[RMDB]
An RNA of 207 nucleotides, treated with 2A3 and read out base by base. The 2A3 profile rests on 1,276 reads. For 2A3 the reverse transcriptase was SuperScript II with manganese.

RNA sequence: GGGAACGACUCGAGUAGAGUCGAAAAAGCAUCGUCCUCCGCUACCUGCGGAAAAUGGCGCACGCUUCCAUCGGGGACCCGGACGGGAUCAACGCGGAGGUCGGGGCCGACGUCGUGCAGCUCCUCGAGGUCCUGCCGGACGACGUGGAGGGCAUGGCGUGACGACAAUAUUCGUAUUGUCGUCACGAAAAGAAACAACAACAACAAC
Reactivity to 2A3 in 0.01 (KOAc 150mM, MgCl2 10mM, bicine 150mM(pH8.5), 24C), signal-to-noise 2, nucleotides 027 to 156: a020g000c050a050u070c030g050u000c000c010u000c000c000g000c020u050a110c000c020u070g130c070g000g020a040a050a010a070u160g050g000c060g000c020a030c100g030c020u060u000c030c000a050u160c050g030g000g000g060a020c010c000c020g100g050a110c060g050g000g010a060u050c100a010a080c060g010c040g000g010a010g020g030u050c040g010g020g010g040c030c010g040a050c060g040u100c020g000u020g010c030a110g130c010u000c000c010u040c020g020a040g000g180u000c000c030u050g140c030c120g020g020a020c030g050a020c060g010u000g010g010a000g000g020g000c020a000u020g000g000